The record gives the reactivity of an RNA of 177 nucleotides to 2A3 and DMS. DMS adducts were read by reverse transcription with MarathonRT. High 2A3 reactivity points to a flexible backbone, as in loops and unpaired stretches. For 2A3, 2,217 sequencing reads were counted. Source: RMDB library OK1LIB, as collected in RNAgym. Conditions: 150 mM KOAc, 10 mM MgCl2 and 150 mM bicine (pH 8.5), 24 C.

RNA sequence: GGGAACGACUCGAGUAGAGUCGAAAAGAUGAGCAGGCAGAUAAUCUUGUGCAGUAUGCAUGCUCGUAACUCCAGCGCACAAGUGGACGCACAAGAUUUAAAUCCAGCAUAGCGCAGGAGCCGCAGACCACCAUGCUACUUUCGAGUAGCAUGGUGGAAAAGAAACAACAACAACAAC
Reactivity to 2A3 in 0.01 (KOAc 150mM, MgCl2 10mM, bicine 150mM(pH8.5), 24C), signal-to-noise 1, nucleotides 027 to 126: g080a050u140g000a000g000c010a000g040g000c010a000g010a100u080a080a020u090c000u010u010g010u000g000c030a050g080u140a030u030g000c010a000u010g000c000u000c030g010u020a040a060c000u000c000c040a010g040c030g030c010a000c020a260a000g120u030g070g000a050c080g000c000a000c000a030a030g010a040u020u020u120a080a060a030u000c020c000a030g020c080a110u040a100g000c000g000c040a130g000g000a000g000c020c060g030c010a040g130a170
Reactivity to DMS in 0.01 (KOAc 150mM, MgCl2 10mM, bicine 150mM(pH8.5), 24C), signal-to-noise 2, nucleotides 027 to 126: g010a070u000g020a010g000c000a010g000g000c000a080g010a080u050a090a000u010c000u000u000g040u000g000c020a170g000u010a090u000g000c000a010u000g060c030u000c070g020u000a100a160c090u010c000c010a100g060c030g000c010a150c190a160a140g030u000g000g030a080c200g070c020a010c000a080a000g020a100u030u020u040a000a080a040u000c000c010a000g000c100a070u000a110g000c000g010c000a060g000g040a030g000c020c040g080c210a140g030a280